[RMDB]
RNA sequence: GGGAACGACUCGAGUAGAGUCGAAAAUAGCGUUCGCGCUAGAGCCGUCCUAAGUCAAUCGGGAGUUGUGAACAAGCUUGGACCGCUUCGGAAACGAAGCGCUAGCUUUCCCACAACAUCGAUCGAUUGAUAUGGAGCCUUGUCAUUUCGAUGACAAUCGACCUUACAACUUCGGUUGUAAGGUCGAAAAAGAAACAACAACAACAAC
Reactivity to 2A3 in 0.01 (KOAc 150mM, MgCl2 10mM, bicine 150mM(pH8.5), 24C), signal-to-noise 1, nucleotides 027 to 156: u020a020g000c000g030u030u030c300g020c010g000c160u030a010g000a030g170c030c060g070u070c000c010u040a140a000g020u000c000a000a000u010c000g000g060g000a020g000u000u000g000u010g020a040a020c070a130a000g020c000u080u090g060g110a120c140c000g020c030u010u000c060g000g030a070a120a050c050g000a040a000g000c000g030c010u010a000g000c000u070u070u030c000c090c010a000c000a010a020c000a250u100c020g120a190u050c020g000a000u000u020g000a000u000a020u040g000g000a040g040c040c060u030u000g020u030c000a000u060u230u170c150g220a030u070g030a010c000a010a040

Structure probing data (2A3) for a 207-nucleotide construct. For 2A3 the reverse transcriptase was SuperScript II with manganese. Conditions: 150 mM KOAc, 10 mM MgCl2 and 150 mM bicine (pH 8.5), 24 C.